[RMDB]
RNA sequence: GGGAACGACUCGAGUAGAGUCGAAAAUAGCCCGGUCUUCGAAGCUUCCUUUGGCUACUACCCGGUGGAAACAACUGAAGCUUCAACGCCUUUUUUUCCUAUCUUCUUUAGCACCGGGCUAGGGAGUAAGCCCGUGGAACCUUAGUCUUGUUCCCUCGUUAGAGUCAAAGUUCGCUUUGACUCUAACAAAAGAAACAACAACAACAAC
Reactivity to DMS in 0.01 (KOAc 150mM, MgCl2 10mM, bicine 150mM(pH8.5), 24C), signal-to-noise 1, nucleotides 027 to 156: u010a050g000c000c000c010g030g020u000c050u020u040c050g010a040a130g010c020u010u000c010c050u000u010u010g040g000c080u000a140c050u010a190c070c060c120g040g020u010g010g000a170a140a070c050a050a120c020u000g010a070a050g030c030u000u000c010a110a100c120g030c020c000u000u000u000u000u000u000u000c030c010u000a190u000c020u000u000c050u010u000u000a100g000c050a080c030c030g000g020g010c040u000a020g000g010g010a150g000u000a090a200g000c010c020c020g000u010g030g000a040a100c050c030u000u010a080g010u010c020u000u000g010u000u000c010c000c010u000c300
Reactivity to 2A3 in 0.01 (KOAc 150mM, MgCl2 10mM, bicine 150mM(pH8.5), 24C), signal-to-noise 3, nucleotides 027 to 156: u060a010g010c010c000c030g010g000u110c110u210u120c140g020a010a000g000c000u010u010c000c020u040u020u050g080g030c010u030a020c000u080a090c010c040c080g020g000u040g020g080a260a230a090c020a010a010c040u020g010a000a000g000c000u010u010c020a020a030c050g060c020c000u100u030u040u020u020u090u190c090c020u160a250u160c070u190u040c020u070u210u110a040g010c030a010c010c000g000g010g020c000u010a020g000g010g000a060g040u080a050a030g030c030c010c020g040u050g020g040a030a030c010c040u050u040a070g040u080c020u040u120g010u010u010c000c000c000u000c020